This 177-nucleotide RNA was probed chemically with DMS and 2A3. It was measured as part of the RMDB library OK2TST. For 2A3 the reverse transcriptase was SuperScript II with manganese. The 2A3 profile rests on 1,414 reads. For DMS, 1,508 sequencing reads were counted.
[RMDB]
RNA sequence: GGGAACGACUCGAGUAGAGUCGAAAACAUACUUGCAAUACCAGUGCUGGGAGAGACAGAUGGAUCCUGAGGAGAGGGGUUGCUGUCUAGCCCCCUAGACCACCUGAUGAGUUUUAAGCCAGCAAGACUCGGAGUAUCAAUUCGUUGAUACUCCGAGAAAAGAAACAACAACAACAAC
Reactivity to DMS in 0.01 (KOAc 150mM, MgCl2 10mM, bicine 150mM(pH8.5), 24C), signal-to-noise 2, nucleotides 027 to 126: c060a100u010a120c080u000u010g000c050a090a080u000a130c060c040a120g030u000g010c030u000g010g000g010a130g020a130g010a080c040a040g000a030u010g000g000a040u010c040c050u010g020a190g010g010a140g020a140g000g010g000g030u000u010g040c010u010g000u010c130u000a070g010c000c010c000c050c010u010a070g000a120c030c010a050c050c050u010g030a060u010g000a130g020u020u000u000u000a080a190g000c040c020a080g010c050a070a050g010a220
Reactivity to 2A3 in 0.01 (KOAc 150mM, MgCl2 10mM, bicine 150mM(pH8.5), 24C), signal-to-noise 2, nucleotides 027 to 126: c010a020u150a080c000u060u120g060c020a040a090u010a140c030c010a040g040u020g040c020u030g040g020g010a080g010a010g030a020c020a060g020a020u150g100g030a090u080c000c010u090g030a150g110g120a150g030a090g050g030g000g010u040u070g040c000u000g040u050c000u010a060g030c000c010c000c030c030u000a030g040a070c020c000a020c010c000u060g060a120u110g040a070g060u000u040u000u100a020a020g070c030c030a000g000c030a050a000g050a050